[RMDB]
RNA sequence: GGGAACGACUCGAGUAGAGUCGAAAACGGAUGUGUUAGGCGUCACACCCAGAAACAUGUGGCAUGGACACAGUCAGUUCAGGAGAUCUGGGGCUGUUUUUCAUGGUUUAGACCAGGUAAGUGUUAGACACGAGUAACCCUUCGGGGUUACUCGUGUAAAAGAAACAACAACAACAAC
Reactivity to DMS in 0.01 (KOAc 150mM, MgCl2 10mM, bicine 150mM(pH8.5), 24C), signal-to-noise 1, nucleotides 027 to 126: c140g010g000a060u010g000u020g000u020u030a090g010g000c060g030u000c040a120c080a050c020c030c020a140g000a140a030a050c100a090u000g010u020g030g010c050a050u000g000g000a030c300a060c030a040g000u010c040a070g000u000u000c020a030g020g000a180g010a120u010c000u000g000g000g020g000c020u000g000u000u000u000u010u010c040a080u000g000g000u000u020u000a110g020a080c000c030a030g020g030u000a010a070g030u010g010u000u000a130g000

Structure probing data (DMS) for a 177-nucleotide construct. Reactivities are given for positions 27 through 126. The reactions ran in a buffer of 150 mM KOAc, 10 mM MgCl2 and 150 mM bicine (pH 8.5), at 24 C. DMS adducts were read by reverse transcription with MarathonRT.